[RMDB]
RNA sequence: GGGAACGACUCGAGUAGAGUCGAAAAGGGGUCGGUUUGGGAGUGCGCAUAGAGACAUGCUUAACUGAAGCCUCCACGGUUAAGCAACAGCUCUAUGUGCACGUUGAUCAAACCGACGGAGGCACCCAAAACAACUAAGCCUUCGGGCUUAGUUGAAUCAACCUUCUUCGUUCGCGAAGAAGGUUGAAAAAGAAACAACAACAACAAC
Reactivity to 2A3 in 0.01 (KOAc 150mM, MgCl2 10mM, bicine 150mM(pH8.5), 24C), signal-to-noise 1, nucleotides 027 to 156: g100g030g060g030u010c010g000g030u010u000u020g010g010g010a070g000u000g000c010g000c010a000u000a000g030a000g100a230c040a140u090g000c000u000u000a000a000c000u000g030a070a000g000c000c000u000c000c020a010c010g000g000u010u010a000a030g060c030a020a120c140a100g100c000u000c000u000a000u000g000u010g000c010a000c000g010u050u010g000a000u000c000a000a000a010c000c000g000a000c000g000g000a000g000g000c010a010c000c000c010a040a130a000a070c010a000a000c000u010a000a010g010c000c000u040u150c300g070g000g000c000u020u000a010g000u000u010g000a010a030